[RMDB]
RNA sequence: GGGAACGACUCGAGUAGAGUCGAAAAACCAUCGUUGCCGUUGCUACUCCUGCGCUGCAAGCGGAUCUUCAUGCCUCCUACAACGAGGUUAUUUGGGUAACGUCGGCCUAUUUGCUGACUUUUGCUAUGAGCCACCUAAUUUCGAUUAGGUGGCUCAAAAAGAAACAACAACAACAAC
Reactivity to DMS in 0.01 (KOAc 150mM, MgCl2 10mM, bicine 150mM(pH8.5), 24C), signal-to-noise 1, nucleotides 027 to 126: a080c040c000a090u020c140g000u010u000g000c000c060g010u000u030g000c050u020a150c070u000c020c000u000g010c050g020c030u010g000c130a070a050g020c040g020g020a030u010c090u000u000c120a030u010g000c040c010u000c010c160u000a150c170a050a060c110g000a010g000g020u000u010a020u020u000u000g030g020g010u000a000a070c300g000u000c000g020g020c010c300u010a160u020u000u010g020c010u000g010a110c010u000u000u000u000g020c100u000a170